The data come from the RNA Mapping Database (RMDB), library OK2TRN.
An RNA of 177 nucleotides, treated with DMS and 2A3 and read out base by base.
RNA sequence: GGGAACGACUCGAGUAGAGUCGAAAAGCCGGCGGCAUGCGCGGGCGGCGCCGCAAUCGUGGAAUCGCCGGGAUGCGGUCAAUGGCGGUGCGCGGCGCGACGUACACCACCGAGCAUCGGCGAUCGACACUACCACCACUUUCGAGUGGUGGUAGUGAAAAGAAACAACAACAACAAC
Reactivity to DMS in 0.01 (KOAc 150mM, MgCl2 10mM, bicine 150mM(pH8.5), 24C), signal-to-noise 3, nucleotides 027 to 126: g000c010c020g000g010c050g000g010c100a070u010g010c060g010c100g010g000g000c050g010g010c060g010c020c010g020c030a140a040u010c070g000u010g010g000a170a050u010c000g010c010c030g000g000g010a060u020g000c010g030g010u000c180a120a110u000g020g000c030g000g020u000g010c080g030c020g000g000c050g010c050g000a050c030g000u000a080c030a070c030c030a030c010c000g000a110g010c040a090u020c010g010g000c040g000a070u000c030g010a190
Reactivity to 2A3 in 0.01 (KOAc 150mM, MgCl2 10mM, bicine 150mM(pH8.5), 24C), signal-to-noise 2, nucleotides 027 to 126: g060c010c040g040g030c060g010g000c050a100u130g040c100g000c000g050g110g030c030g040g030c010g000c010c010g000c010a020a090u070c050g030u110g040g070a200a040u010c000g000c020c000g010g130g010a090u170g030c000g000g050u080c060a100a220u200g130g000c080g000g020u050g040c090g000c000g090g020c040g000c000g050a030c010g020u110a020c030a060c050c000a010c020c010g000a030g000c000a040u050c000g050g000c010g000a020u020c030g010a020
Background:
The RNA was probed in 150 mM KOAc, 10 mM MgCl2 and 150 mM bicine (pH 8.5) at 24 C.